[RMDB]
RNA sequence: GGGAACGACUCGAGUAGAGUCGAAAAGUGCGGCACGUGUCGGUGUACGGCAGCGUUUACGCCAUCGCGGACAUCUCCUACUCCGUCGCGUACGCCAUGGGGCCGGUGGUGGCCGGGCAGAUCGUGCGAAGUUUCUACGCUUCGGCGUAGAAACUUCAAAAGAAACAACAACAACAAC
Reactivity to DMS in 0.01 (KOAc 150mM, MgCl2 10mM, bicine 150mM(pH8.5), 24C), signal-to-noise 1, nucleotides 027 to 126: g050u010g000c070g000g020c150a020c050g040u000g040u020c000g000g000u000g010u010a020c140g000g000c150a050g000c300g010u000u000u000a020c080g000c010c070a130u010c160g000c020g010g000a030c120a080u020c050u000c010c020u000a050c030u000c010c000g000u000c060g000c010g010u010a050c060g000c000c060a100u010g030g000g010g070c000c020g000g000u020g000g010u030g000g020c030c010g020g000g010c090a070g000a040u010c110g020u000g000c240